RNA sequence: GGGAACGACUCGAGUAGAGUCGAAAAGAUAUGGAAAUACACGCUUUUGACGUCGUUCGGAAACGAGACGACGAUAAGCGUGAUUUCCUAAGUCAAACCUAAAAGGUUGUUCGCAACCUUUUAGGAAGCAUUAUGGACCGUUCGCGGUCCAUAAUGCAAAAGAAACAACAACAACAAC
Reactivity to 2A3 in 0.01 (KOAc 150mM, MgCl2 10mM, bicine 150mM(pH8.5), 24C), signal-to-noise 2, nucleotides 027 to 126: g010a010u070a030u130g020g080a060a000a000u190a280c000a000c020g000c000u090u170u160u300g300a070c020g000u000c020g000u000u040c000g000g060a000a070a040c010g000a010g080a070c010g000a000c000g020a000u060a130a000g000c000g000u000g000a000u000u000u000c000c010u050a020a000g010u010c050a100a050a110c000c010u000a000a000a040a000g030g000u010u000g030u070u080c300g000c100a000a020c000c000u000u000u000u000a010g000g000a020a000
Reactivity to DMS in 0.01 (KOAc 150mM, MgCl2 10mM, bicine 150mM(pH8.5), 24C), signal-to-noise 2, nucleotides 027 to 126: g000a060u000a290u020g010g000a000a020a000u010a140c000a010c000g030c000u020u000u010u000g020a180c070g020u010c000g000u000u000c000g020g000a070a090a130c010g010a050g010a000c000g030a000c010g010a050u000a040a020g010c000g020u000g000a040u000u000u000c000c010u000a030a110g000u010c020a110a100a210c010c000u000a000a000a000a020g010g000u000u000g010u020u000c240g020c010a010a010c000c000u000u000u000u000a000g020g010a010a050
Overview
Structure probing data (2A3 and DMS) for a 177-nucleotide construct. The reactions ran in a buffer of 150 mM KOAc, 10 mM MgCl2 and 150 mM bicine (pH 8.5), at 24 C. Reactivities are given for positions 27 through 126. For DMS, 1,496 sequencing reads were counted. High 2A3 reactivity points to a flexible backbone, as in loops and unpaired stretches. For 2A3, 3,282 sequencing reads were counted. Source: RMDB library TTRDEL, as collected in RNAgym.